[RMDB]
RNA sequence: GGGAACGACUCGAGUAGAGUCGAAAAGAUAUGGAGCACAGCUAGCUCCAGAGCGGGAGGUAAUUCGCUCGGAAACGAGCGAAUUACCUGUGAACGCUCCAGAGCUUGGACCUGUGCUCCUAAGUCACUAUCAUAAACUGUUCGCAGUUUAUGAUAGAAAAGAAACAACAACAACAAC
Reactivity to 2A3 in 0.01 (KOAc 150mM, MgCl2 10mM, bicine 150mM(pH8.5), 24C), signal-to-noise 2, nucleotides 027 to 126: g020a010u040a030u240g000g000a010g020c010a000c010a000g050c090u130a010g030c030u060c000c000a000g010a010g000c020g020g040g000a040g000g000u010a000a000u000u010c010g010c020u030c030g010g010a040a070a020c000g000a010g120c300g010a020a000u000u000a000c000c010u010g010u020g030a010a000c000g000c000u010c000c020a070g000a010g070c060u290u280g070g090a100c030c050u020g000u010g000c000u010c010c000u000a020a000g010u000c000a020
Reactivity to DMS in 0.01 (KOAc 150mM, MgCl2 10mM, bicine 150mM(pH8.5), 24C), signal-to-noise 4, nucleotides 027 to 126: g010a050u010a300u010g000g000a000g020c000a010c030a020g000c030u000a030g000c010u010c000c100a070g000a020g020c010g010g000g000a010g020g020u000a010a010u000u000c000g020c000u000c020g000g020a080a090a230c010g030a010g020c000g010a010a000u000u000a000c010c000u000g000u010g000a190a300c010g010c010u000c000c060a080g000a040g010c010u010u010g020g000a120c300c010u000g010u000g000c010u000c000c000u000a010a070g010u010c050a280